[RMDB]
RNA sequence: GGGAACGACUCGAGUAGAGUCGAAAAGCCGCGGCUGUGCUGGAUAACCUCGCCACGCGCCUGCGGCCCUUUCUCCAGUGCUACCUGAAGGCGCGAGGCCUGUGCGGCCUGGACGAACUGUGUUCGCGGCGGCGUCUGGCGGACAUUAAGGACAUUGGCUUAAGUUCAUCUUCGGAUGAACUUAAGCAAAAGAAACAACAACAACAAC
Reactivity to 2A3 in 0.01 (KOAc 150mM, MgCl2 10mM, bicine 150mM(pH8.5), 24C), signal-to-noise 2, nucleotides 027 to 156: g020c040c020g030c030g030g000c030u190g010u060g080c080u040g080g050a130u090a300a210c030c080u070c100g040c010c000a010c010g000c000g010c020c020u060g010c010g000g000c000c000c000u030u020u000c010u000c000c000a000g000u010g140c000u040a150c030c000u110g150a160a020g040g030c040g070c010g050a050g240g000c000c010u070g090u190g150c090g000g050c010c000u030g000g040a060c040g020a020a040c030u120g020u020g000u300u110c030g000c000g010g070c070g050g000c010g050u080c070u010g020g000c020g000g000a010c020a040u180u240a050a030g020g030a000c040a090u070u110g090